[RMDB]
Structure probing data (2A3 and DMS) for a 207-nucleotide construct. For 2A3, 2,429 sequencing reads were counted.
RNA sequence: GGGAACGACUCGAGUAGAGUCGAAAAGGAGACUGUGGGAGCCCAGUGCCCAGAGCAACCUACUCUACUAAGGGAGUUGAGAGGAUGGGGAGCUAGACACGUGUUAUGUGGAUCCAGAGCCACUUGGUACUAAGCUCUUACUCCCUGCAAAACACUAGAGGAUGAUUUUAUUCGUAAAAUCAUCCUCAAAAGAAACAACAACAACAAC
Reactivity to 2A3 in 0.01 (KOAc 150mM, MgCl2 10mM, bicine 150mM(pH8.5), 24C), signal-to-noise 4, nucleotides 027 to 156: g040g010a050g020a050c070u070g010u090g110g010g020a040g040c030c100c040a050g070u110g050c010c000c010a030g040a030g020c030a040a090c010c000u050a080c010u070c010u040a080c020u070a120a170g120g020g010a030g050u060u140g080a050g010a010g080g010a070u180g030g020g000g000a010g020c050u040a020g040a020c030a010c080g050u040g060u080u090a120u120g020u010g020g020a030u090c090c070a050g010a040g130c010c000a060c040u010u040g020g000u020a030c010u040a070a070g010c010u000c000u000u020a040c010u000c000c000c000u000g000c030a030a060a070a020c080a020c060u210a030
Reactivity to DMS in 0.01 (KOAc 150mM, MgCl2 10mM, bicine 150mM(pH8.5), 24C), signal-to-noise 2, nucleotides 027 to 156: g050g030a190g020a110c010u010g060u020g010g010g020a300g010c020c090c120a150g020u000g000c030c000c000a090g010a100g040c020a080a120c040c030u000a140c030u010c000u000a120c060u010a100a120g030g010g000a070g030u020u010g010a160g010a130g000g050a130u000g000g000g020g030a050g020c030u000a040g010a070c010a100c120g000u010g000u000u000a080u000g010u000g000g020a080u000c080c300a190g000a290g010c010c020a050c030u000u000g020g000u000a060c030u000a070a120g010c070u000c000u000u010a070c010u010c020c000c000u000g000c050a080a090a070a090c080a030c090u020a120
The reactions ran in a buffer of 150 mM KOAc, 10 mM MgCl2 and 150 mM bicine (pH 8.5), at 24 C. For 2A3 the reverse transcriptase was SuperScript II with manganese.